[RMDB]
RNA sequence: GGGAACGACUCGAGUAGAGUCGAAAAGAUAUGGACCUACUGGAGACCCUUUAAGCCGAGUCGGAAACGAUAUCUUAAGCGGUCGUUGAAAGUAGGUCCUAAGUCAAAACCACACUUCGGUGUGGAACAUAAUUACUAAGUUCGCUUAGUAAUUAUGAAAAGAAACAACAACAACAAC
Reactivity to DMS in 0.01 (KOAc 150mM, MgCl2 10mM, bicine 150mM(pH8.5), 24C), signal-to-noise 9, nucleotides 027 to 126: g000a040u000a300u010g000g000a020c000c000u000a010c000u000g000g000a080g000a020c000c000c020u000u000u010a010a030g010c300c160g000a140g010u000c000g000g000a090a080a140c010g010a020u000a070u000c010u000u000a010a020g010c300g000g010u000c000g010u000u010g000a160a100a030g000u000a000g000g000u000c000c000u000a010a080g010u000c030a070a060a090a160c010c000a010c010a000c000u000u010c160g020g010u000g020u000g000g000a060a090
Reactivity to 2A3 in 0.01 (KOAc 150mM, MgCl2 10mM, bicine 150mM(pH8.5), 24C), signal-to-noise 6, nucleotides 027 to 126: g010a000u050a040u120g010g000a000c000c000u000a000c000u020g000g040a020g000a030c010c000c020u020u070u030a060a020g040c100c120g140a090g100u030c020g000g000a040a050a010c010g010a000u010a060u140c010u020u030a020a020g030c090g120g000u030c020g090u200u030g000a030a010a000g000u000a000g010g000u000c000c000u000a000a000g000u010c000a000a000a020a080c010c010a000c000a000c000u070u130c290g120g000u000g000u000g010g000a000a010